[RMDB]
An RNA of 207 nucleotides, treated with 2A3 and DMS and read out base by base. For DMS the reverse transcriptase was MarathonRT. Reactivities are given for positions 27 through 156. The 2A3 profile rests on 1,411 reads. The RNA was probed in 150 mM KOAc, 10 mM MgCl2 and 150 mM bicine (pH 8.5) at 24 C.
RNA sequence: GGGAACGACUCGAGUAGAGUCGAAAACUUUCCUAGCAGUAUGCUUACUACGACAACUAAAAUUCCACUUCACAUCCAACCACCACUUCGGCUUUGAAGCCGCAGCCUGAUACUGACACUUCGUAGAUGUAGUUUGACUAUUCCUUUACGUAUCAAUAAGAACCAUAUUCUUCGGAAUAUGGUUCUUAAAAGAAACAACAACAACAAC
Reactivity to 2A3 in 0.01 (KOAc 150mM, MgCl2 10mM, bicine 150mM(pH8.5), 24C), signal-to-noise 3, nucleotides 027 to 156: c010u040u030u000c000c020u000a010g000c020a010g020u160a030u160g030c030u070u030a050c040u060a040c050g110a020c040a120a030c050u240a020a030a030a070u150u020c040c020a020c020u030u030c040a020c010a140u010c020c010a020a060c050c000a010c000c000a030c020u050u030c010g020g000c010u110u090u190g150a160a010g000c000c000g010c010a010g000c000c010u030g010a040u070a080c010u040g090a010c010a010c110u060u060c020g050u050a040g000a070u060g030u030a030g010u060u030u160g020a010c010u020a050u040u020c020c010u040u110u090a080c110g040u040a040u030c030a040a060u000
Reactivity to DMS in 0.01 (KOAc 150mM, MgCl2 10mM, bicine 150mM(pH8.5), 24C), signal-to-noise 2, nucleotides 027 to 156: c040u000u000u000c000c010u010a160g010c070a060g010u000a050u000g020c050u010u010a110c060u000a110c000g010a120c070a060a140c050u000a040a050a060a120u000u010c000c040a060c030u010u000c060a040c110a050u000c030c050a120a090c030c010a100c030c030a050c050u000u000c030g020g020c040u000u000u000g010a070a110g060c000c060g000c050a040g000c010c030u000g030a120u000a030c030u010g010a110c060a050c040u000u000c060g000u000a050g000a090u000g010u000a070g000u000u000u010g000a140c040u000a120u010u010c010c040u000u020u000a100c070g030u000a120u000c090a050a290u000